[RMDB]
Chemical mapping of a 207-nucleotide RNA with DMS and 2A3. DMS adducts were read by reverse transcription with MarathonRT.
RNA sequence: GGGAACGACUCGAGUAGAGUCGAAAAGUUGAGGCGACUUAGCAGAUUAGGCGUUGUUAUGCCUUAGUGGUCCUUACUCCAUGCAAAGCUUGCGUGCAAGCGGGGUAUUGUGCCGCGGGGACAACUGGUCGGGAGCUGGGCCGCUCCCCUGAUGAGCGUCAAUCGUUAAGUUCGCUUAACGAUUGACAAAAGAAACAACAACAACAAC
Reactivity to DMS in 0.01 (KOAc 150mM, MgCl2 10mM, bicine 150mM(pH8.5), 24C), signal-to-noise 1, nucleotides 027 to 156: g010u000u000g030a210g010g010c020g030a100c040u000u000a120g000c050a150g020a160u000u010a070g010g010c030g020u020u030g080u020u000a120u000g040c040c000u000u010a030g050u000g020g020u000c030c020u010u000a020c030u000c000c010a230u000g000c140a090a140a260g000c080u000u000g070c060g040u000g010c030a080a110g060c030g010g010g010g010u000a040u000u000g020u000g030c000c010g060c000g000g050g010g010a090c010a050a110c040u040g000g030u010c060g000g000g040a160g060c050u010g040g010g050c040c060g000c020u000c020c000c020c040u000g000a120u010g030a160g010c200
Reactivity to 2A3 in 0.01 (KOAc 150mM, MgCl2 10mM, bicine 150mM(pH8.5), 24C), signal-to-noise 2, nucleotides 027 to 156: g080u090u070g090a040g040g050c010g010a030c020u100u080a030g040c050a030g020a210u110u140a090g040g000c040g030u030u080g050u050u140a110u250g070c000c000u020u120a050g000u010g010g010u000c000c000u020u000a000c000u000c020c010a070u230g090c070a050a080a090g000c010u050u080g030c030g160u170g060c000a010a030g050c010g020g000g010g000u000a010u010u070g110u230g000c000c000g000c000g000g000g010g000a020c010a110a040c080u080g110g030u090c020g070g000g010a020g010c010u070g000g070g000c040c000g010c010u020c000c000c020c020u090g070a130u070g050a080g100c060

Overview
The data come from the RNA Mapping Database (RMDB), library VIROID.